[RMDB]
Background:
An RNA of 177 nucleotides, treated with DMS and 2A3 and read out base by base. For 2A3 the reverse transcriptase was SuperScript II with manganese. For DMS, 1,112 sequencing reads were counted. Values cover nucleotides 27 to 126. For 2A3, 1,077 sequencing reads were counted.
RNA sequence: GGGAACGACUCGAGUAGAGUCGAAAACGUCACCGGGCAAAGACCGGCAAUCGCACCAGCCUUGGCCAUAUGUUUCGUUUCCUCGUCGCUCAUAUGGGUUGCGUGAAUGAGACACCAGCGCGCCGUACGGCGAUGGUGAGUUCGCUCACCAUCGCCGAAAAGAAACAACAACAACAAC
Reactivity to DMS in 0.01 (KOAc 150mM, MgCl2 10mM, bicine 150mM(pH8.5), 24C), signal-to-noise 1, nucleotides 027 to 126: c080g000u000c110a130c010c060g020g000g000c100a100a110a090g010a080c060c030g030g000c090a070a070u030c110g000c090a090c010c020a050g010c030c010u000u000g000g000c060c040a070u000a090u000g000u000u000u000c040g020u000u000u000c030c020u000c090g030u000c110g000c020u010c030a090u000a110u010g020g000g020u000u020g030c070g000u000g020a050a090u010g000a090g040a030c030a120c040c060a070g010c070g000c060g020c010c050g000u000a090
Reactivity to 2A3 in 0.01 (KOAc 150mM, MgCl2 10mM, bicine 150mM(pH8.5), 24C), signal-to-noise 1, nucleotides 027 to 126: c010g000u030c030a040c020c000g020g010g060c150a300a160a000g080a190c000c020g000g000c050a020a070u000c010g020c020a040c020c010a000g080c000c000u030u060g070g000c020c000a060u120a000u260g040u010u040u070c010g000u000u070u040c000c000u010c020g040u040c050g020c000u000c020a110u120a070u300g050g000g000u010u190g020c000g000u010g060a030a050u090g000a070g000a000c080a040c010c010a030g030c010g020c050g030c020c020g050u060a080